[RMDB]
RNA sequence: GGGAACGACUCGAGUAGAGUCGAAAAUAAGCACCUCGUUAGGUGAGGCGGCUACACGAACAUAGGCCACUGACCGCGAACGUCGAGAGACGCCCCGGGUCAGGACAGCUCUUCCCGGCUUAAGGGUAAAAUCACAACGUCUUCGGACGUUGUGAAAGCACAGUAAAAGGUUCGCCUUUUACUGUGCAAAAGAAACAACAACAACAAC
Reactivity to 2A3 in 0.01 (KOAc 150mM, MgCl2 10mM, bicine 150mM(pH8.5), 24C), signal-to-noise 2, nucleotides 027 to 156: u210a010a000g020c010a010c010c010u040c000g100u110u290a120g000g160u150g040a000g010g010c090g050g000c020u070a020c100a040c090g160a230a010c060a190u170a080g130g000c010c010a020c010u020g000a000c000c010g030c000g060a010a010c000g000u000c000g010a030g000a010g000a140c000g000c030c000c000c000g000g010g000u000c000a000g010g020a010c020a000g000c010u000c040u050u030c000c010c000g040g000c030u100u120a040a050g040g000g030u050a030a040a040a100u050c000a000c000a000a000c000g000u000c000u060u090c150g080g000a000c000g000u000u000g000u000g010a000a000a000
Reactivity to DMS in 0.01 (KOAc 150mM, MgCl2 10mM, bicine 150mM(pH8.5), 24C), signal-to-noise 1, nucleotides 027 to 156: u000a100a080g040c010a070c010c010u010c020g070u010u000a150g060g020u000g040a040g040g000c050g060g070c010u000a030c170a120c000g020a070a120c040a140u000a090g050g010c020c030a140c000u000g010a010c000c030g000c050g030a080a030c020g050u000c020g020a300g030a300g030a050c010g030c020c000c070c150g040g010g020u010c010a010g010g000a070c150a150g010c050u000c030u000u000c000c010c000g010g000c040u000u010a100a110g020g050g000u000a030a110a070a250u010c000a000c010a040a000c000g010u000c010u000u020c300g070g000a020c030g030u010u040g010u000g000a000a000a120